Overview:
The data come from the RNA Mapping Database (RMDB), library M2PK50. An RNA of 177 nucleotides, treated with DMS and 2A3 and read out base by base.
[RMDB]
RNA sequence: GGGAACGACUCGAGUAGAGUCGAAAAUUCGCGUGAUUCGUCACGCGAAGAUUACCGAGAACCGUGCUCGGAAUAAACAUGGAACCCUUGGAAACAAGGGAAAUAGGCAGGCCUUCGGGCCUGCCAACUAACUAACUAUCUUCGGAUAGUUAGUUAGAAAAGAAACAACAACAACAAC
Reactivity to DMS in 0.01 (KOAc 150mM, MgCl2 10mM, bicine 150mM(pH8.5), 24C), signal-to-noise 4, nucleotides 027 to 126: u000u000c010g010c000g030u000g010a030u000u020c190g030u000c000a010c000g020c010g010a000a010g000a160u000u000a300c020c000g000a020g010a110a130c030c020g020u000g010c000u000c010g000g000a130a070u000a040a070a090c050a030u000g010g010a200a300c000c000c000u000u000g010g000a140a140a180c000a010a010g010g000g000a000a050a070u000a090g000g010c020a000g000g000c000c000u000u010c180g000g030g000c000c000u000g010c010c010a000a050
Reactivity to 2A3 in 0.01 (KOAc 150mM, MgCl2 10mM, bicine 150mM(pH8.5), 24C), signal-to-noise 2, nucleotides 027 to 126: u010u000c000g000c000g010u000g000a020u030u090c190g020u000c120a010c010g000c000g000a010a000g000a000u010u090a080c010c010g000a000g000a040a060c020c000g030u040g010c010u000c010g000g060a030a060u140a060a020a010c010a020u040g010g050a060a070c000c010c000u000u000g000g020a060a030a020c000a000a010g000g000g030a020a020a000u000a010g010g000c010a000g060g000c020c010u090u170c220g040g000g000c020c000u010g030c000c000a000a000
Description: The DMS profile rests on 4,987 reads.